[RMDB]
RNA sequence: GGGAACGACUCGAGUAGAGUCGAAAACAUGUACGCUUCAAGUGCGGCGGUCGGCCAGAGUCGACAGGCUCCCUAGCUCGUAGCAUGUCCGAAGAGGAUGAAAUCGAGGUGGUGUGCCGCGCCACCGUCUUGGGUUGGUGUUCGCGCCGACUCAAGAAAAAGAAACAACAACAACAAC
Reactivity to 2A3 in 0.01 (KOAc 150mM, MgCl2 10mM, bicine 150mM(pH8.5), 24C), signal-to-noise 9, nucleotides 027 to 126: c040a030u080g020u100a030c030g010c030u070u090c080a080a030g030u030g060c000g020g000c000g010g010u020c000g010g000c000c040a050g020a040g070u030c010g040a060c030a050g050g050c010u050c010c010c010u030a050g030c010u010c050g020u020a020g030c030a040u050g020u000c000c000g020a100a030g030a030g070g000a020u040g060a040a030a030u120c060g010a030g010g010u010g000g000u040g020u060g020c000c010g020c000g000c000c000a000c000c000g020
Reactivity to DMS in 0.01 (KOAc 150mM, MgCl2 10mM, bicine 150mM(pH8.5), 24C), signal-to-noise 9, nucleotides 027 to 126: c090a070u030g010u020a060c090g020c040u010u010c080a080a080g010u010g020c030g000g010c030g020g000u000c020g010g020c010c120a120g010a090g020u010c020g010a070c160a080g010g000c020u010c020c040c010u010a080g010c010u000c040g020u010a060g020c090a100u030g010u000c000c000g000a120a090g000a220g000g010a030u000g000a050a090a090u020c080g000a100g000g010u000g000g010u010g000u020g000c010c030g010c050g000c010c000a010c000c010g000
Source information:
Source: RMDB library OK1LIB, as collected in RNAgym. The record gives the reactivity of an RNA of 177 nucleotides to 2A3 and DMS. The DMS profile rests on 50,395 reads. The RNA was probed in 150 mM KOAc, 10 mM MgCl2 and 150 mM bicine (pH 8.5) at 24 C. Values cover nucleotides 27 to 126. For 2A3, 39,175 sequencing reads were counted.